[RMDB]
This 207-nucleotide RNA was probed chemically with 2A3. The RNA was probed in 150 mM KOAc, 10 mM MgCl2 and 150 mM bicine (pH 8.5) at 24 C. The data come from the RNA Mapping Database (RMDB), library RSTRND. For 2A3 the reverse transcriptase was SuperScript II with manganese.
RNA sequence: GGGAACGACUCGAGUAGAGUCGAAAACUCAGCGCGACUACGCCCUCGCUGCCUAAUUUGCAGCGACCUGCGUGUCUGUCAGCCUAGAUUCGUCUCUGGUUUAGUGUCUGGCAUCGAUUAAGAGACUUGCUGGUUUGUUGUGUCAACGGGGCAAACUGAUUAGUACUCCGUUCGCGGAGUACUAAUCAAAAGAAACAACAACAACAAC
Reactivity to 2A3 in 0.01 (KOAc 150mM, MgCl2 10mM, bicine 150mM(pH8.5), 24C), signal-to-noise 1, nucleotides 027 to 156: c030u060c080a010g050c070g040c010g140a000c030u300a000c010g000c000c040c000u030c000g000c000u000g000c000c040u270a290a260u120u160u300g000c000a000g000c000g000a010c000c000u040g000c030g000u000g010u040c030u060g030u010c000a000g020c020c000u000a000g000a000u030u080c100g020u000c030u020c000u030g000g000u030u030u030a040g020u040g190u200c000u000g000g000c000a040u080c040g150a050u000u260a070a040g020a020g020a100c000u020u060g020c070u030g120g000u110u080u070g020u000u020g000u010g030u040c060a060a000c060g030g000g000g060c040a060a040a060c060u030